[RMDB]
RNA sequence: GGGAACGACUCGAGUAGAGUCGAAAACACGAUUUCUUCGGAAAUCGUGAAAAGAGCUAGCAAGGUUCCGCUAGCAAAGAUCGAAAGAUCUAAGGAACCAAAAAAGUUCGAACUUCGGUUCGAACAAGAACACUAACAUGUUCGCAUGUUAGUGUUCAAAAGAAACAACAACAACAAC
Reactivity to DMS in 0.01 (KOAc 150mM, MgCl2 10mM, bicine 150mM(pH8.5), 24C), signal-to-noise 3, nucleotides 027 to 126: c010a000c000g000a000u000u000u020c000u000u030c150g000g000a020a000a010u000c000g020u000g000a020a030a150a180g000a120g010c010u000a010g010c000a170a070g020g000u000u000c000c000g020c000u000a020g010c050a020a150a030g000a000u000c000g000a160a100a160g010a010u000c010u020a010a100g010g000a020a000c010c000a020a040a050a050a080a080g000u000u000c000g010a000a000c000u000u020c210g030g000u000u000c000g000a010a010c020a090a030
Reactivity to 2A3 in 0.01 (KOAc 150mM, MgCl2 10mM, bicine 150mM(pH8.5), 24C), signal-to-noise 2, nucleotides 027 to 126: c010a000c000g000a000u010u020u000c010u020u040c150g010g000a000a000a000u000c000g000u010g020a000a020a000a010g060a020g000c000u000a000g000c030a230a150g000g000u000u000c010c010g000c000u000a000g000c050a130a300a010g010a000u010c010g020a060a020a020g000a000u000c000u000a000a000g000g000a010a000c000c000a000a030a060a000a050a050g000u000u000c000g000a000a000c000u030u070c270g060g000u000u010c000g000a000a000c000a000a010